This 207-nucleotide RNA was probed chemically with 2A3.
The reactions ran in a buffer of 150 mM KOAc, 10 mM MgCl2 and 150 mM bicine (pH 8.5), at 24 C.
It was measured as part of the RMDB library OK3TST.
RNA sequence: GGGAACGACUCGAGUAGAGUCGAAAACGCGAGAUAUCGGACUCUGAUUACUCCAUCCGAAACGUACGCUCACAAUCCGUAACCAUACGUACGGAAACCAUCCUGUUCUCGCCAUCCGAAACGUACGUGGUCAUAUUAUAGAAUCUGGUAUAUACUGGCUGACGGUACGGUUCGCCGUACCGUCAGCAAAAGAAACAACAACAACAAC
Reactivity to 2A3 in 0.01 (KOAc 150mM, MgCl2 10mM, bicine 150mM(pH8.5), 24C), signal-to-noise 2, nucleotides 027 to 156: c000g010c030g030a000g000a030u010a030u060c030g040g000a040c010u020c020u120g100a080u100u180a100c030u030c140c000a060u000c090c030g000a080a040a000c000g010u010a000c040g010c030u040c050a100c030a060a090u040c010c010g010u040a060a210c040c000a100u090a210c000g010u010a010c030g040g000a090a040a030c030c030a040u010c000c020u020g100u060u040c030u020c030g000c100c000a090u020c010c000g030a050a000a000c040g010u010a000c010g020u050g010g000u050c020a080u080a020u190u190a080u040a070g140a150a060u020c090u110g040g050u030a060u030a050u050a080c050u060g100